The record gives the reactivity of an RNA of 177 nucleotides to DMS and 2A3. For DMS, 2,278 sequencing reads were counted. DMS adducts were read by reverse transcription with MarathonRT. High 2A3 reactivity points to a flexible backbone, as in loops and unpaired stretches.

RNA sequence: GGGAACGACUCGAGUAGAGUCGAAAAGAUAUGGAGCAAGCAAGGAAAUAACAUAUAGUCGGAAACGACUAUAGUCAUUUCUGAUGACCUUGCUCCUAAGUCAAAGCCAAGUCUUCGGACUUGGCAACUCAUUAUUCCCGUUCGCGGGAAUAAUGAGAAAAGAAACAACAACAACAAC
Reactivity to DMS in 0.01 (KOAc 150mM, MgCl2 10mM, bicine 150mM(pH8.5), 24C), signal-to-noise 3, nucleotides 027 to 126: g020a030u010a300u000g000g000a020g020c010a000a000g020c020a090a130g000g000a000a020a030u000a020a010c010a070u000a020u000a000g020u000c010g000g010a160a130a200c000g000a000c020u000a010u000a010g000u000c030a010u000u000u000c000u000g000a110u020g000a060c300c000u000u000g000c000u000c000c010u010a010a040g020u010c010a090a130a160g000c000c000a020a000g010u000c000u000u000c210g020g020a010c000u000u000g000g010c010a030a000
Reactivity to 2A3 in 0.01 (KOAc 150mM, MgCl2 10mM, bicine 150mM(pH8.5), 24C), signal-to-noise 1, nucleotides 027 to 126: g040a010u040a030u170g020g010a000g010c000a000a010g000c010a090a190g020g020a040a020a010u080a070a030c180a050u030a000u000a030g010u010c000g030g040a070a050a080c040g010a000c010u000a000u000a000g010u020c000a000u000u030u000c010u020g100a230u140g030a060c020c000u000u000g000c000u000c000c010u030a060a000g020u000c030a120a000a000g010c010c000a000a020g010u000c020u080u210c300g130g010a000c000u000u000g000g020c000a000a000